[RMDB]
Structure probing data (DMS) for a 177-nucleotide construct.
RNA sequence: GGGAACGACUCGAGUAGAGUCGAAAAAAAGCUUUUUCUUGAAUUCGUGAACGAUCGAAGGUUUACCUCGGCUACGCAGUUUUGCCUUUUCGUCCAUACCUUCCAUAUAUUGUUGAUAACGAGGCAACGCCUCUGACAGUUUCGACUGUCAGAGGCGAAAAGAAACAACAACAACAAC
Reactivity to DMS in 0.01 (KOAc 150mM, MgCl2 10mM, bicine 150mM(pH8.5), 24C), signal-to-noise 1, nucleotides 027 to 126: a020a080a120g020c060u000u000u000u000u000c080u020u000g000a100a110u000u000c030g060u010g000a150a060c030g030a040u000c070g010a050a040g040g010u000u000u000a050c050c020u010c080g000g000c060u010a100c160g010c080a040g000u000u000u010u000g020c040c020u000u000u000u000c040g000u000c030c020a050u020a040c070c020u000u000c020c040a070u010a090u010a110u010u000g000u000u000g000a080u000a070a050c100g010a070g010g000c100a080a130

It was measured as part of the RMDB library OK2TRN. Conditions: 150 mM KOAc, 10 mM MgCl2 and 150 mM bicine (pH 8.5), 24 C.